The record gives the reactivity of an RNA of 177 nucleotides to 2A3 and DMS.
DMS adducts were read by reverse transcription with MarathonRT.
Conditions: 150 mM KOAc, 10 mM MgCl2 and 150 mM bicine (pH 8.5), 24 C.
Source: RMDB library M2PK50, as collected in RNAgym.
The 2A3 profile rests on 1,254 reads.
RNA sequence: GGGAACGACUCGAGUAGAGUCGAAAAUAAUGCCACUUCGGUGGCAUUAGCACGUACGAAAGCCCUAUCAAGUACAAAAUCCCAAACAACAAGAUAGGCAAAUAAUGCAUAGCUUCGGCUAUGCAAAGUGUAAACCUAGGUUCGCCUAGGUUUACACAAAAGAAACAACAACAACAAC
Reactivity to 2A3 in 0.01 (KOAc 150mM, MgCl2 10mM, bicine 150mM(pH8.5), 24C), signal-to-noise 1, nucleotides 027 to 126: u030a000a010u000g000c000c030a050c040u040u060c240g110g010u000g050g030c000a010u000u000a000g000c020a010c160g020u040a000c020g050a180a030a020g030c000c000c000u010a000u010c020a000a060g060u070a060c050a010a110a010a060u010c010c000c010a020a170a080c130a040a050c000a040a000g010a010u060a000g010g000c000a000a040a000u240a060a070u070g010c000a010u000a010g000c010u100u060c300g110g050c000u010a000u000g000c000a020a000a000
Reactivity to DMS in 0.01 (KOAc 150mM, MgCl2 10mM, bicine 150mM(pH8.5), 24C), signal-to-noise 2, nucleotides 027 to 126: u010a000a010u010g000c010c000a010c000u020u010c200g000g040u000g000g010c000a000u010u010a000g000c210a020c120g000u010a040c010g010a030a110a170g020c180c010c000u020a010u000c010a040a080g000u000a000c020a120a120a050a100u000c000c010c010a010a050a020c070a070a030c040a300a120g000a000u010a020g000g000c050a220a070a090u000a060a180u000g000c000a000u000a010g000c000u000u010c150g060g010c020u000a010u000g000c000a000a000a090